[RMDB]
RNA sequence: GGGAACGACUCGAGUAGAGUCGAAAAGCGCAUAGUGAACUUCGAUCGAUCCGUGGCACCGUGCAGCGAGGAUGCUCAGCUGUACGUACGGAAGAGCGGCUCAACGAUAGUGCAGGGUAAAGAAGCGCUUCACCCAGUAUUUCGAUACUGGGUGAAGAAAAGAAACAACAACAACAAC
Reactivity to 2A3 in 0.01 (KOAc 150mM, MgCl2 10mM, bicine 150mM(pH8.5), 24C), signal-to-noise 3, nucleotides 027 to 126: g020c010g000c030a070u110a100g100u070g020a070a020c020u100u050c070g120a130u030c020g050a080u020c030c010g050u050g100g000c060a050c100c020g000u000g000c000a000g000c000g020a020g140g040a220u300g170c020u010c030a050g000c000u030g000u030a020c010g030u030a020c010g040g000a080a000g020a040g000c020g000g010c000u000c020a050a080c040g020a050u120a080g040u060g030c050a040g070g020g010u090a100a100a060g080a110a030g030c020g000
Reactivity to DMS in 0.01 (KOAc 150mM, MgCl2 10mM, bicine 150mM(pH8.5), 24C), signal-to-noise 4, nucleotides 027 to 126: g010c020g030c050a070u010a130g000u000g010a050a050c040u000u000c030g010a130u000c090g000a090u000c020c010g020u000g000g010c190a090c190c020g010u000g000c000a020g020c040g010a040g010g000a180u020g000c000u010c010a150g030c000u000g020u010a030c060g000u010a040c070g020g000a070a100g010a260g010c030g000g010c070u000c050a040a080c070g010a060u000a030g010u000g000c010a090g010g010g010u010a070a060a130g010a100a150g010c120g000